[RMDB]
RNA sequence: GGGAACGACUCGAGUAGAGUCGAAAAACACCGUGGAAACGGAUGAAGGCACGAACCCAGUUGACAUAAGCCUGUUCGGUUCGUAAACUGUAAUGCAAGUAGCGUAUGCGCUCACGCAACUGGUCCAACAAAAGAACUUCUUCGGAAGUUCUUUUGUAAAAGAAACAACAACAACAAC
Reactivity to 2A3 in 0.01 (KOAc 150mM, MgCl2 10mM, bicine 150mM(pH8.5), 24C), signal-to-noise 2, nucleotides 027 to 126: a040c050a000c000c040g000u060g060g140a130a150a050c010g000g050a050u120g120a150a090g090g020c070a010c070g000a010a000c010c000c000a010g030u080u080g060a040c040a080u300a090a010g030c000c030u030g020u150u140c050g020g020u000u030c030g050u080a070a130a050c010u030g050u130a070a080u100g040c070a050a060g040u080a020g150c030g040u080a050u270g120c080g010c010u030c000a030c070g060c000a000a050c030u060g000g020u000c030c010a010
Reactivity to DMS in 0.01 (KOAc 150mM, MgCl2 10mM, bicine 150mM(pH8.5), 24C), signal-to-noise 3, nucleotides 027 to 126: a120c020a080c020c000g020u010g010g010a080a140a010c010g010g000a070u000g010a110a070g020g000c150a080c060g010a010a080c060c010c040a060g010u010u000g020a110c120a120u020a130a100g010c040c020u010g000u000u000c120g000g000u000u010c100g030u010a020a090a070c080u000g010u010a060a060u000g000c050a080a090g010u000a030g020c010g000u020a060u010g020c060g000c050u000c090a040c150g000c010a050a070c080u000g020g020u010c040c050a080